Chemical mapping of a 177-nucleotide RNA with DMS and 2A3. It was measured as part of the RMDB library TTRDEL. For 2A3 the reverse transcriptase was SuperScript II with manganese. DMS (dimethyl sulfate) methylates the pairing face of unpaired adenines and cytosines. The 2A3 profile rests on 7,886 reads.
RNA sequence: GGGAACGACUCGAGUAGAGUCGAAAAGAUAUGGAACAAUGGACAUGCCUUUCAAAGGGUCGGAAACGACCUACAAAGGGCAACAGCCCGCUUGUUCCUAAGUCAAAUCCGUCGUUCGCGACGGAAACCUCUUUUAGGAGUUCGCUCCUAAAAGAGGAAAAGAAACAACAACAACAAC
Reactivity to DMS in 0.01 (KOAc 150mM, MgCl2 10mM, bicine 150mM(pH8.5), 24C), signal-to-noise 3, nucleotides 027 to 126: g010a030u000a300u000g000g020a020a010c010a040a020u000g000g020a030c030a300u000g000c000c010u000u000u000c100a050a130a210g000g000g010u010c000g020g020a090a100a220c000g030a000c000c010u010a050c300a040a020a020g000g000g020c000a040a070c190a140g010c000c000c010g040c190u010u000g000u000u000c000c000u000a050a070g020u010c020a110a100a110u000c010c010g000u000c000g010u010u000c220g000c020g000a010c000g000g000a000a010a070
Reactivity to 2A3 in 0.01 (KOAc 150mM, MgCl2 10mM, bicine 150mM(pH8.5), 24C), signal-to-noise 3, nucleotides 027 to 126: g020a010u090a030u100g010g000a010a000c010a010a050u210g010g000a020c040a090u150g000c010c010u040u070u050c110a140a140a160g070g000g000u010c010g010g000a070a090a030c020g000a010c000c000u010a020c020a000a050a000g030g010g020c020a020a040c030a040g050c010c000c000g080c090u010u000g000u020u000c000c000u020a150a000g050u030c020a020a030a200u020c000c000g010u000c000g030u060u110c300g000c020g140a000c000g000g000a030a000a010